[RMDB]
RNA sequence: GGGAACGACUCGAGUAGAGUCGAAAACUGGAUCCGAAGCCUCUAGAAGGAUAAUAUAGGCACUCCAUACCCUACUCCGACUCAAUACGUCCCCGUCGUACAGAAUGGUAACAUAUCUCUCCAAAUAGAAUGAGAUACUGUUCGCAGUAUCUCAUUCAAAAGAAACAACAACAACAAC
Reactivity to 2A3 in 0.01 (KOAc 150mM, MgCl2 10mM, bicine 150mM(pH8.5), 24C), signal-to-noise 9, nucleotides 027 to 126: c020u030g030g030a040u060c000c010g040a080a020g050c010c010u050c050u080a130g050a180a030g180g020a070u070a170a070u140a070u080a080g030g000c020a020c060u000c010c000a030u060a120c010c000c000u010a030c010u000c030c020g090a060c010u010c030a040a090u090a110c040g030u030c010c010c000c010g060u060c020g000u020a040c030a060g090a070a060u050g050g010u070a050a020c010a030u120a090u040c030u000c000u000c030c020a040a060a020u120a060
Reactivity to DMS in 0.01 (KOAc 150mM, MgCl2 10mM, bicine 150mM(pH8.5), 24C), signal-to-noise 5, nucleotides 027 to 126: c110u000g000g030a060u030c040c020g000a080a190g010c030c030u010c040u020a090g010a130a100g000g010a060u040a090a080u030a070u020a100g000g010c080a080c050u020c070c030a090u000a080c040c020c010u000a050c070u000c040c000g000a040c040u010c060a060a110u040a100c120g000u020c010c000c010c010g000u010c070g030u000a070c070a120g000a050a050u010g000g030u030a060a090c030a050u000a080u010c020u000c040u000c030c060a030a070a100u010a080